[RMDB]
RNA sequence: GGGAACGACUCGAGUAGAGUCGAAAAUUCCACAGCUUUCUUGAACUGCAUCUAUUACAGAACUGGUAGUAGUGCUUUUGCUUCCUUGCAAUUGCUUGCAUGCCACUGUACGGCUGGCUCCUUUUUUUACGUGCGUAUAGUUCGCUAUACGCACGUAAAAAGAAACAACAACAACAAC
Reactivity to 2A3 in 0.01 (KOAc 150mM, MgCl2 10mM, bicine 150mM(pH8.5), 24C), signal-to-noise 3, nucleotides 027 to 126: u020u000c000c010a060c000a030g010c030u020u140u040c020u090u130g060a100a070c030u040g030c010a050u000c040u070a130u110u000a040c030a070g130a300a100c060u160g050g020u020a010g000u010a020g060u000g030c000u040u030u020u010g010c000u080u130c050c040u040u090g010c040a020a050u020u050g040c010u020u020g000c010a060u120g010c010c000a040c020u010g030u060a040c050g050g000c030u000g010g000c010u040c040c010u030u160u000u000u000u000